Chemical mapping of a 177-nucleotide RNA with 2A3 and DMS. 2A3 adducts were read by reverse transcription with SuperScript II with manganese. For DMS, 2,856 sequencing reads were counted. Conditions: 150 mM KOAc, 10 mM MgCl2 and 150 mM bicine (pH 8.5), 24 C. For 2A3, 2,095 sequencing reads were counted. DMS adducts were read by reverse transcription with MarathonRT.
RNA sequence: GGGAACGACUCGAGUAGAGUCGAAAAGGAUUGAGAGCAGUGUAUCCAGCACGUGAUUAAGAAUGGCAGAACGAAAACCGUGGGUGAUACCUGCAAACACCCCGAGGAUCACGCCACACAGUGCCGCCGAAGGAGGAACGUUCGCGUUCCUCCUUCGAAAAGAAACAACAACAACAAC
Reactivity to 2A3 in 0.01 (KOAc 150mM, MgCl2 10mM, bicine 150mM(pH8.5), 24C), signal-to-noise 2, nucleotides 027 to 126: g110g000a120u110u160g040a080g030a020g100c100a040g010u020g000u130a020u030c030c010a010g070c020a010c010g020u090g020a140u170u080a100a070g070a100a100u100g070g000c050a030g080a180a020c060g050a030a030a040a100c060c050g030u140g030g040g000u030g000a020u070a130c000c000u040g010c000a030a070a000c060a020c020c000c010c000g010a060g030g020a040u080c020a030c060g040c040c000a010c010a000c010a020g050u060g010c060c010g000c010
Reactivity to DMS in 0.01 (KOAc 150mM, MgCl2 10mM, bicine 150mM(pH8.5), 24C), signal-to-noise 4, nucleotides 027 to 126: g020g010a060u000u000g040a090g020a300g020c020a010g020u000g000u010a060u000c050c040a110g020c030a040c050g030u010g020a070u000u010a070a150g010a060a100u010g020g000c030a060g000a090a120c110g010a080a050a120a100c160c060g010u000g010g000g010u000g000a030u000a040c030c000u000g010c080a040a080a150c060a130c050c010c010c020g000a050g000g000a100u010c040a040c040g020c030c010a080c070a050c080a090g000u000g000c020c040g020c180